[RMDB]
RNA sequence: GGGAACGACUCGAGUAGAGUCGAAAAGAAACGAGGGUUGGCUAACCCUGGUCGGACAUCAGGAGGUUAGUGCACUCGCAUAAGCCAACUUGACAACAAAAAGGAAAAAGAAAGAAGAAAAAGAAAAGCCAUAGUAUAGCUUCGGCUAUACUAUGGCAAAAGAAACAACAACAACAAC
Reactivity to 2A3 in 0.01 (KOAc 150mM, MgCl2 10mM, bicine 150mM(pH8.5), 24C), signal-to-noise 2, nucleotides 027 to 126: g040a020a070a000c010g040a060g030g080g050u060u160g060g000c000u010a010a000c000c000c010u000g050g000u040c100g060g050a010c000a060u020c000a020g000g040a020g000g150u010u060a010g030u050g180c020a010c020u080c030g000c010a150u140a120a020g050c000c000a000a020c050u010u050g060a040c070a110a020c060a040a170a030a040a040g030g110a040a030a110a020a060g170a040a120a000g150a080a040g030a000a070a040a060a000g080a020a110a000a010
Reactivity to DMS in 0.01 (KOAc 150mM, MgCl2 10mM, bicine 150mM(pH8.5), 24C), signal-to-noise 1, nucleotides 027 to 126: g010a060a060a170c110g000a090g000g000g040u000u040g000g010c030u000a100a060c040c000c000u000g030g010u000c300g020g000a300c140a060u000c000a020g040g000a120g000g000u000u000a020g000u030g020c000a160c050u020c080g000c060a030u010a100a060g020c000c000a070a030c050u050u000g000a190c150a040a110c060a060a080a020a030a040g000g000a000a040a150a030a040g000a050a000a010g020a060a140g000a000a040a060a030a030g010a110a080a040a150
Conditions: 150 mM KOAc, 10 mM MgCl2 and 150 mM bicine (pH 8.5), 24 C.
This 177-nucleotide RNA was probed chemically with 2A3 and DMS.
The 2A3 profile rests on 1,191 reads.
For DMS, 1,436 sequencing reads were counted.
Source: RMDB library OK1LIB, as collected in RNAgym.